[RMDB]
Conditions: 150 mM KOAc, 10 mM MgCl2 and 150 mM bicine (pH 8.5), 24 C. An RNA of 207 nucleotides, treated with 2A3 and DMS and read out base by base. For 2A3, 3,854 sequencing reads were counted. Source: RMDB library OK3TST, as collected in RNAgym. For 2A3 the reverse transcriptase was SuperScript II with manganese.
RNA sequence: GGGAACGACUCGAGUAGAGUCGAAAAUGCGAGGCAGCCAUCGAUAUAUCCACCGGGGCGGUGUCCCCCAUGAUCAUCCUGAAGAGAGUGAUGUCGUUCUGAAUUGUGCAUGAUUCCGGCUGCUCGAUGUGCGAUUUUGGAGAUGAAAUAUUCUCUGGUUAACUGUCUUUUUCGAAAGACAGUUAACAAAAGAAACAACAACAACAAC
Reactivity to 2A3 in 0.01 (KOAc 150mM, MgCl2 10mM, bicine 150mM(pH8.5), 24C), signal-to-noise 5, nucleotides 027 to 156: u200g010c030g010a030g050g040c010a000g020c010c010a050u110c050g030a010u020a010u010a020u200c070c040a050c060c050g000g000g000g000c120g010g030u070g030u100c030c040c000c020c000a040u110g060a040u100c030a030u070c020c040u050g080a140a030g080a010g000a010g050u090g030a040u060g020u020c040g030u050u010c010u010g100a180a150u150u080g010u040g030c020a030u050g020a050u120u030c070c020g000g000c000u010g010c000u030c010g010a030u030g020u060g050c050g080a090u010u040u050u300g030g010a020g000a000u030g030a020a050a020u100a060u270u010c010u000c020u000g030
Reactivity to DMS in 0.01 (KOAc 150mM, MgCl2 10mM, bicine 150mM(pH8.5), 24C), signal-to-noise 3, nucleotides 027 to 156: u030g040c060g010a140g000g020c000a070g000c000c020a190u000c090g030a150u010a090u000a130u000c050c020a090c050c050g010g010g010g040c070g030g040u010g020u000c030c000c010c010c040a070u010g010a120u000c030a120u000c040c040u000g020a100a090g010a110g010a080g020u020g010a070u010g030u000c010g020u000u000c030u010g000a050a080u000u000g020u010g030c040a040u000g000a190u000u020c020c010g030g000c020u010g000c030u000c030g020a070u000g040u010g020c010g010a110u010u000u000u020g040g010a120g020a100u010g000a090a120a140u010a170u000u010c010u000c010u000g020